RNA sequence: GGGAACGACUCGAGUAGAGUCGAAAAGUGGUUCAACAGCGAGUACAUCGAACUCGUACCCGAUGUCAGCAAGUUCAUCUACAUUCCGCUUGACGCCAUCGCGGUAAAGACUGUGGAUCGUUGGUACACGCCGCCCUAUGCGCAGCGUGGUAAGCGACACUAUUAACACAUUCGUGUGUUAAUAGUGAAAAGAAACAACAACAACAAC
Reactivity to DMS in 0.01 (KOAc 150mM, MgCl2 10mM, bicine 150mM(pH8.5), 24C), signal-to-noise 6, nucleotides 027 to 156: g020u000g030g020u000u000c040a090a060c030a070g020c000g010a060g000u000a070c070a130u000c140g010a090a070c080u000c040g020u000a030c020c000c000g010a030u000g010u000c020a130g000c030a030a040g020u000u000c050a110u000c080u000a150c090a250u000u010c050c080g010c000u000u000g010a050c030g000c090c030a070u000c030g010c070g010g000u000a050a070a100g010a100c040u000g000u000g010g010a070u000c040g000u000u010g000g000u000a070c010a020c000g040c000c010g000c010c020c090u000a160u000g020c080g050c010a020g030c000g030u000g000g000u000a060a080g020c040g020a280
Reactivity to 2A3 in 0.01 (KOAc 150mM, MgCl2 10mM, bicine 150mM(pH8.5), 24C), signal-to-noise 9, nucleotides 027 to 156: g090u070g040g030u040u060c070a130a040c000a070g010c010g020a000g010u080a060c060a290u170c170g080a080a030c010u000c020g010u010a020c000c000c010g000a010u020g020u040c040a030g000c010a050a020g010u120u120c060a180u060c140u190a150c080a230u210u120c070c060g000c010u030u020g040a110c030g000c020c000a010u010c010g000c120g030g000u020a030a050a020g070a100c020u020g000u030g050g010a020u010c010g020u020u050g050g010u050a020c000a000c010g000c010c000g040c010c010c050u200a180u300g050c130g000c030a030g000c010g000u010g010g060u110a060a010g040c020g030a010
Structure probing data (DMS and 2A3) for a 207-nucleotide construct. The 2A3 profile rests on 15,726 reads. Conditions: 150 mM KOAc, 10 mM MgCl2 and 150 mM bicine (pH 8.5), 24 C. Source: RMDB library OK3TST, as collected in RNAgym. Reactivities are given for positions 27 through 156. DMS adducts were read by reverse transcription with MarathonRT. For DMS, 28,130 sequencing reads were counted.